Chemical mapping of a 177-nucleotide RNA with DMS and 2A3. Source: RMDB libraries RFM100 and RFMREP, as collected in RNAgym. The RNA was probed in 150 mM KOAc, 10 mM MgCl2 and 150 mM bicine (pH 8.5) at 24 C. For 2A3 the reverse transcriptase was SuperScript II with manganese. For DMS the reverse transcriptase was MarathonRT.
RNA sequence: GGGAACGACUCGAGUAGAGUCGAAAAUCUUAUUACGGUACGUGCAAACAUUAGUUUCCAAGCGGAAGAAACUGUGUGUUCAUUUUAUGGAUUUUCGUGUUGUACGAUUUUUGUCAGUUGCCUCAACUCAGAUUCGAACAUUCGUGUUCGAAUCUGAAAAAGAAACAACAACAACAAC
Reactivity to DMS in 0.01 (KOAc 150mM, MgCl2 10mM, bicine 150mM(pH8.5), 24C), signal-to-noise 2, nucleotides 027 to 126: u000c020u010u010a090u040u010a010c090g030g000u010a060c040g020u030g000c120a060a110a010c020a020u010u020a000g010u000u000u000c000c090a120a170g000c190g020g030a100a090g010a010a040a020c010u000g010u000g010u000g000u000u000c030a070u000u010u010u000a090u000g020g020a030u000u000u000u020c010g050u010g010u000u000g010u010a030c100g000a070u010u010u020u000u030g000u020c050a080g010u030u000g000c140c000u070c130a060a120c170
Reactivity to 2A3 in 0.01 (KOAc 150mM, MgCl2 10mM, bicine 150mM(pH8.5), 24C), signal-to-noise 3, nucleotides 027 to 126: u000c000u020u190a150u190u130a130c100g030g050u020a010c030g020u030g070c020a030a120a070c000a030u140u220a080g000u000u010u000c010c020a050a030g110c090g100g040a130a040g020a010a010a000c010u010g010u000g000u010g020u070u090c050a130u030u040u080u210a080u120g050g030a090u030u040u070u100c060g020u050g070u130u090g000u000a050c080g020a170u040u030u070u080u030g030u000c050a030g000u010u060g100c000c000u030c020a010a010c020